[RMDB]
RNA sequence: GGGAACGACUCGAGUAGAGUCGAAAAGCGUACUACAACUCUUUUGACGCUCUAAGGGUGACAUGCCUCUCCCAAAUAGGAGAGGCAACAGCACCCGAUGAGCGAUAAGAGUUGUAUCGCAAACCAAUGAUGCAACGUUCGCGUUGCAUCAUUGGAAGAUUGUAAAUUUCUUCGGAAAUUUACAAUCAAAAGAAACAACAACAACAAC
Reactivity to 2A3 in 0.01 (KOAc 150mM, MgCl2 10mM, bicine 150mM(pH8.5), 24C), signal-to-noise 3, nucleotides 027 to 156: g000c010g040u130a120c050u010a000c020a000a000c000u040c020u020u030u070u220g210a120c020g000c000u020c010u060a090a080g040g010g000u010g060a120c040a100u030g000c000c000u000c020u040c010c080c020a260a300a070u300a060g010g000a000g000a010g000g000c000a000a000c000a000g000c000a000c000c000c000g000a020u020g000a000g000c010g000a000u020a000a000g000a010g000u000u000g010u010a010u130c000g000c000a040a040a040c000c000a000a000u000g000a020u000g000c030a000a000c000g040u090u080c260g040c000g100u000u020g000c000a000u000c000a000u000u000g000g000a000a000
Reactivity to DMS in 0.01 (KOAc 150mM, MgCl2 10mM, bicine 150mM(pH8.5), 24C), signal-to-noise 2, nucleotides 027 to 156: g010c040g000u000a070c080u000a010c000a030a030c000u000c000u000u000u000u000g020a240c060g030c020u000c010u000a260a280g000g020g030u000g000a120c040a300u000g010c010c000u000c060u000c010c000c030a050a150a260u010a070g010g010a000g000a000g050g000c000a010a000c000a160g020c010a020c000c000c020g010a100u000g000a030g000c000g030a090u000a010a010g000a060g040u000u000g000u000a000u000c000g040c000a090a090a190c000c010a000a020u000g010a080u000g000c000a020a020c010g000u000u010c300g020c110g030u000u000g000c000a010u000c000a000u000u000g000g000a040a080